The record gives the reactivity of an RNA of 177 nucleotides to DMS and 2A3. The data come from the RNA Mapping Database (RMDB), library OK1LIB. 2A3 adducts were read by reverse transcription with SuperScript II with manganese. The RNA was probed in 150 mM KOAc, 10 mM MgCl2 and 150 mM bicine (pH 8.5) at 24 C. For 2A3, 9,912 sequencing reads were counted. DMS adducts were read by reverse transcription with MarathonRT.

RNA sequence: GGGAACGACUCGAGUAGAGUCGAAAACUCGUGGUCGCCGUCGUCGUGACGGCCGUCGGCUACGCGGUGACGCGACCGGCUCGCAACGACCGUGAGGAGCCCAGUUCCGCGCGGGGCGCCGCCACGAAGGUAAAUCAAGGUUCGCCUUGAUUUACCUAAAAGAAACAACAACAACAAC
Reactivity to DMS in 0.01 (KOAc 150mM, MgCl2 10mM, bicine 150mM(pH8.5), 24C), signal-to-noise 3, nucleotides 027 to 126: c000u000c020g000u010g010g010u010c030g030c130c030g000u000c020g000u030c090g010u040g020a080c080g010g010c150c060g020u000c130g040g010c020u010a050c020g000c000g010g020u030g000a140c120g000c020g000a080c030c040g000g000c040u000c070g000c100a120a140c080g000a080c000c020g000u000g010a170g000g000a050g010c040c020c050a160g000u010u000c010c030g010c050g010c030g020g000g020g000c020g000c080c070g000c060c020a030c080g020a120
Reactivity to 2A3 in 0.01 (KOAc 150mM, MgCl2 10mM, bicine 150mM(pH8.5), 24C), signal-to-noise 7, nucleotides 027 to 126: c010u010c010g030u030g020g000u070c040g020c090c020g030u030c010g070u020c010g060u070g050a230c030g010g010c010c010g150u110c060g020g000c030u100a050c040g000c010g010g050u070g030a030c030g050c000g120a170c000c010g020g000c030u030c020g050c030a060a100c070g080a060c000c030g020u040g020a070g010g060a000g020c020c030c020a040g040u120u030c010c020g020c010g010c010g010g010g020g030c020g000c010c020g010c020c010a020c030g030a050